[RMDB]
RNA sequence: GGGAACGACUCGAGUAGAGUCGAAAAACCCUGUCAUUGCCACGCUACUAAGGACUCCCUGUAUACCGUGGCCGACGUCAGACAUUGUCUGACUGAAUACAUCCUGUGGGUUUCUCAUAGAUGGACCCAUAGAGAAAGCGCAGGGUCUCUCUACAGGGAGUCUUUAGGAGUUCGCUCCUAAAGACUCAAAAGAAACAACAACAACAAC
Reactivity to 2A3 in 0.01 (KOAc 150mM, MgCl2 10mM, bicine 150mM(pH8.5), 24C), signal-to-noise 2, nucleotides 027 to 156: a000c020c000c000u010g020u040c070a130u100u180g000c000c020a000c030g050c050u090a020c010u130a120a100g110g050a220c020u100c040c010c000u010g000u000a110u060a040c000c010g000u000g000g010c000c010g030a030c040g000u000c000a000g000a000c080a300u190u300g010u030c000u000g000a000c000u000g010a030a050u100a140c010a040u020c010c000u010g000u000g000g000g130u000u130u040c090u040c050a240u200a170g060a060u130g010g000a000c010c010c000a000u000a000g080a030g010a050a130a000g090c080g000c020a010g020g000g050u000c000u000c000u000c010u020a040c000a030g040g000
Reactivity to DMS in 0.01 (KOAc 150mM, MgCl2 10mM, bicine 150mM(pH8.5), 24C), signal-to-noise 2, nucleotides 027 to 156: a120c000c000c000u000g040u010c010a190u000u000g030c020c010a100c020g010c050u030a040c070u000a140a060g000g000a130c030u000c030c020c000u000g000u000a100u020a030c080c010g060u000g050g070c030c070g000a190c200g000u010c000a010g000a020c000a260u000u010g040u000c000u000g020a000c010u000g000a150a170u000a090c050a130u000c030c000u010g000u000g020g030g000u000u000u000c050u000c040a210u000a120g020a140u000g000g000a100c000c000c010a060u010a100g010a150g000a030a080a110g030c130g020c040a090g000g000g020u000c020u010c030u030c020u000a050c000a050g030g000